Structure probing data (2A3 and DMS) for a 177-nucleotide construct. Reactivities are given for positions 27 through 126. The 2A3 profile rests on 295 reads. In probing experiments dimethyl sulfate is read out at A N1 and C N3, which are open when not base-paired. Source: RMDB library OK1LIB, as collected in RNAgym.

RNA sequence: GGGAACGACUCGAGUAGAGUCGAAAAGCACUAUAGAGUUGGUGGAAUUGUAGAGAAUCAUAAAGUGCAAAUAGAUAACCAACCUAGUAGAUGUGGAGUGAGUGAGUUCCAUGCCAUACGUAUGUUAAGCAUUGAGCGAAUUCGUUCGCUCAAUGCUAAAAGAAACAACAACAACAAC
Reactivity to 2A3 in 0.01 (KOAc 150mM, MgCl2 10mM, bicine 150mM(pH8.5), 24C), signal-to-noise 1, nucleotides 027 to 126: g000c000a000c000u060a000u000a000g000a000g000u000u000g000g000u000g000g240a040a040u000u070g000u070a000g040a020g090a230a220u070c000a000u220a160a300a000g040u000g110c000a180a000a000u020a090g300a200u130a000a070c000c000a000a000c000c000u140a300g070u040a000g000a200u000g180u300g000g090a190g000u000g000a040g000u150g000a160g000u000u000c000c000a020u180g180c000c200a040u070a070c110g110u150a000u040g070u190u070a300
Reactivity to DMS in 0.01 (KOAc 150mM, MgCl2 10mM, bicine 150mM(pH8.5), 24C), signal-to-noise 1, nucleotides 027 to 126: g000c030a060c030u050a010u070a090g000a300g000u000u000g000g050u000g000g020a300a000u000u000g030u000a060g000a060g120a130a100u000c300a050u040a050a060a060g000u000g000c000a050a130a040u000a020g000a120u020a260a040c000c000a040a000c010c000u080a050g080u060a060g000a170u000g040u010g000g010a250g000u020g000a190g040u000g000a030g030u000u000c000c000a100u000g000c010c000a180u070a060c000g000u020a060u040g000u000u000a010